[RMDB]
RNA sequence: GGGAACGACUCGAGUAGAGUCGAAAAGUAAAAGAGGAGAAAGCGCGCACUCCUCAAGCGCGCAGAUGUACGUACCACAUCAGGUACGAACGCGCCAAGGGUGGGAGGCGCGAACCCACCCUAAAAAACAGUAUACAAACUUCGGUUUGUAUACUGUAAAAGAAACAACAACAACAAC
Reactivity to 2A3 in 0.01 (KOAc 150mM, MgCl2 10mM, bicine 150mM(pH8.5), 24C), signal-to-noise 3, nucleotides 027 to 126: g100u110a030a070a100a080g020a020g030g010a040g020a050a110a040g050c020g000c000g000c020a020c030u000c010c000u010c010a010a020g040c030g000c010g000c020a010g030a110u190g040u050a040c010g000u000a000c000c020a060c030a290u190c090a080g020g000u010a000c000g010a020a000c010g000c000g000c010c020a050a030g010g000g000u020g000g050g000a040g000g030c010g000c000g070a010a010c000c000c000a010c010c000c000u020a080a060a000a000a000
Reactivity to DMS in 0.01 (KOAc 150mM, MgCl2 10mM, bicine 150mM(pH8.5), 24C), signal-to-noise 4, nucleotides 027 to 126: g010u010a060a040a100a130g010a040g010g010a020g000a060a060a140g000c030g000c020g020c030a190c030u000c000c000u000c020a050a070g020c060g010c010g020c040a060g010a080u000g010u010a070c020g010u000a000c010c010a160c220a100u020c220a070g010g010u000a000c000g000a060a040c050g020c040g010c030c160a090a040g000g000g010u000g010g000g010a070g000g000c020g000c030g000a030a070c010c010c000a020c000c000c000u010a000a040a030a050a020